[RMDB]
RNA sequence: GGGAACGACUCGAGUAGAGUCGAAAACACGGCAAAAGUUUUUUUGCAUAUCCUGCACAGUUUCAGUUCUCGCAGAGUACGCAAAAAAUCAAUUUUGACGUGAGAAAGCGUCGUCUUCGGACGACGCGACUCUAUAUAUCUUCGGAUAUAUAGAGUCAAAAGAAACAACAACAACAAC
Reactivity to DMS in 0.01 (KOAc 150mM, MgCl2 10mM, bicine 150mM(pH8.5), 24C), signal-to-noise 1, nucleotides 027 to 126: c000a020c010g010g000c000a000a030a020a030g000u000u000u000u000u000u000u000g010c000a050u000a010u000c040c000u010g000c020a140c300a120g010u010u000u000c260a200g010u010u010c040u000c120g030c020a000g010a050g020u000a010c080g010c000a000a000a010a000a010a000u000c040a050a090u000u000u010u000g000a010c010g000u000g000a170g000a050a080a180g020c010g000u000c000g000u010c000u000u000c140g030g000a010c000g010a010c000g030c010
Reactivity to 2A3 in 0.01 (KOAc 150mM, MgCl2 10mM, bicine 150mM(pH8.5), 24C), signal-to-noise 2, nucleotides 027 to 126: c010a000c010g000g040c010a010a000a020a020g000u020u010u000u000u000u010u000g010c000a020u010a010u080c010c000u020g010c020a110c020a120g040u070u280u300c070a080g020u150u110c090u060c090g000c000a000g020a020g030u010a010c020g000c000a010a000a010a010a000a010u060c030a060a100u000u020u010u010g020a000c010g010u010g000a050g120a040a170a000g010c000g010u020c020g000u000c020u030u030c180g050g000a000c000g020a000c000g000c020